[RMDB]
The record gives the reactivity of an RNA of 177 nucleotides to 2A3 and DMS. For DMS, 903 sequencing reads were counted. It was measured as part of the RMDB library OK1LIB.
RNA sequence: GGGAACGACUCGAGUAGAGUCGAAAAGAAGAAAUAAAGAACGUACGUUCGAGCCAUCUUAUCUGGCGGGAUAUGAUGGGAAGAACCGCCGAGCCCCGAUCGUACGGAAGGGCCGAAAAGAAAGAAAGGAAAACUCUUACUUCGGUAAGAGUUUUCCAAAAGAAACAACAACAACAAC
Reactivity to 2A3 in 0.01 (KOAc 150mM, MgCl2 10mM, bicine 150mM(pH8.5), 24C), signal-to-noise 1, nucleotides 027 to 126: g040a060a000g160a000a100a090u300a060a000a050g040a120a000c000g060u200a000c040g000u000u020c000g000a030g100c010c000a030u000c000u020u050a030u000c000u040g220g040c160g090g030g000a000u060a010u030g020a000u000g000g000g000a000a100g080a000a000c000c000g000c030c020g020a060g000c010c030c000c080g080a070u030c030g020u100a040c000g000g010a060a080g020g010g000c000c000g000a000a170a030a000g030a060a090a030g120a080a020a040
Reactivity to DMS in 0.01 (KOAc 150mM, MgCl2 10mM, bicine 150mM(pH8.5), 24C), signal-to-noise 1, nucleotides 027 to 126: g000a100a020g000a130a070a160u030a050a040a120g000a060a050c040g010u000a060c050g000u030u000c000g000a230g000c000c060a060u020c000u000u000a000u000c040u000g000g060c160g000g000g000a040u000a010u020g000a000u000g000g000g000a110a300g000a040a060c030c010g060c070c040g010a300g000c130c100c020c150g000a060u010c000g050u020a000c010g000g000a050a160g000g000g040c000c050g000a070a070a050a090g000a060a070a140g020a040a220a120
The reactions ran in a buffer of 150 mM KOAc, 10 mM MgCl2 and 150 mM bicine (pH 8.5), at 24 C.